RNA sequence: GGGAACGACUCGAGUAGAGUCGAAAACUCGAAAGAGACCUGCAUAUCUUAGGCAGAUGAGCAAGUCUCGUCUGAAAAGCGAAAGCCCUAAGAUAUGCAGCUGUGAGGACUUGACGCAGAAAAUAAACCAUAGCCUAGCAUUCGUGCUAGGCUAUGGAAAAGAAACAACAACAACAAC
Reactivity to DMS in 0.01 (KOAc 150mM, MgCl2 10mM, bicine 150mM(pH8.5), 24C), signal-to-noise 2, nucleotides 027 to 126: c000u000c010g010a060a070a180g010a020g000a120c120c000u000g000c000a010u000a000u000c010u000u000a000g000g010c000a000g000a000u010g010a010g000c010a140a130g000u020c000u000c020g000u000c000u000g010a060a030a110a220g010c000g000a180a120a180g000c000c000c000u000a020a000g000a010u000a000u000g000c000a000g000c020u030g000u000g000a070g010g010a020c050u040u000g000a180c060g000c050a040g010a260a080a050a070u070a020a050a160
Reactivity to 2A3 in 0.01 (KOAc 150mM, MgCl2 10mM, bicine 150mM(pH8.5), 24C), signal-to-noise 5, nucleotides 027 to 126: c010u010c010g020a010a040a010g060a010g030a090c010c000u000g010c000a000u000a000u000c000u000u000a000g000g000c000a000g000a000u000g000a000g010c060a140a190g130u040c010u000c000g020u000c010u020g020a060a060a040a060g010c010g060a110a030a000g010c000c000c000u000a000a000g000a010u000a000u000g000c000a000g010c000u020g020u020g040a090g030g100a080c030u070u110g000a040c030g000c030a010g120a040a090a050a070u300a070a060a030